[RMDB]
RNA sequence: GGGAACGACUCGAGUAGAGUCGAAAAUAUGCGUUUAAAGACAAUGCUUUAGUGAGUGGAAGGGCAAGUUUUGCCGCUACUGCUAAACUGAAGUGUUCGUCUAUGUGUGCCGGCCAUGAAGCCAUGGAUCCAAUAGGUAAUUCGUUACCUAUUGGAUAAAAGAAACAACAACAACAAC
Reactivity to 2A3 in 0.01 (KOAc 150mM, MgCl2 10mM, bicine 150mM(pH8.5), 24C), signal-to-noise 9, nucleotides 027 to 126: u240a060u090g030c030g030u070u120u160a190a190a000g000a000c010a010a010u010g000c000u010u000u010a010g000u010g040a010g000u010g000g020a040a030g040g000g000c030a080a130g060u090u140u230u090g020c010c050g170c210u020a040c000u020g000c010u050a220a220a030c000u010g000a010a000g010u010g020u020u040c060g000u000c010u010a060u070g070u000g020u040g050c020c030g030g020c010c010a060u070g070a110a020g050c040c010a030u060g040g010
Reactivity to DMS in 0.01 (KOAc 150mM, MgCl2 10mM, bicine 150mM(pH8.5), 24C), signal-to-noise 9, nucleotides 027 to 126: u010a070u000g010c060g020u000u000u000a080a130a050g010a020c010a020a010u000g000c000u000u000u000a010g030u000g000a040g020u000g010g010a140a050g010g000g010c010a020a130g010u010u010u000u000g010c000c000g020c020u000a100c000u000g010c020u000a040a090a020c010u000g000a010a010g010u000g010u000u000c220g010u000c000u000a050u000g010u000g020u000g010c040c070g010g010c010c020a040u000g000a140a150g010c110c020a040u000g000g000